[RMDB]
RNA sequence: GGGAACGACUCGAGUAGAGUCGAAAAGUAAGAGUAUAGAUUGAUAGAGUUACUUUGGGGAAUAAUUUGUCAAUAUUAGGUAAAAUUGAGAUUGACCACACCUUCAACCUACCUAGAGAAAUUCAUGCAAAUGUGUAUAAGGAAGUACACAGCAUGACGUAUGCUCGCGUUUCGACGCGAGCAUACGAAAAGAAACAACAACAACAAC
Reactivity to 2A3 in 0.01 (KOAc 150mM, MgCl2 10mM, bicine 150mM(pH8.5), 24C), signal-to-noise 1, nucleotides 027 to 156: g020u090a050a000g050a010g040u120a090u120a190g080a170u130u040g000a040u130a100g050a020g120u060u020a040c040u090u100u020g030g030g000g060a120a000u210a100a010u050u070u100g070u070c010a000a080u030a010u250u050a040g140g020u060a020a160a000a070u030u020g040a000g030a070u000u090g080a100c040c000a020c000a000c010c040u020u030c000a060a050c020c030u060a030c000c000u000a000g010a000g000a100a050a050u060u000c000a000u000g020c020a000a110a250u040g000u030g030u000a020u000a140a060g150g000a180a000g040u000a000c000a000c000a000g020c020a000u000g000a000

Conditions: 150 mM KOAc, 10 mM MgCl2 and 150 mM bicine (pH 8.5), 24 C. An RNA of 207 nucleotides, treated with 2A3 and read out base by base. It was measured as part of the RMDB library OK3TST.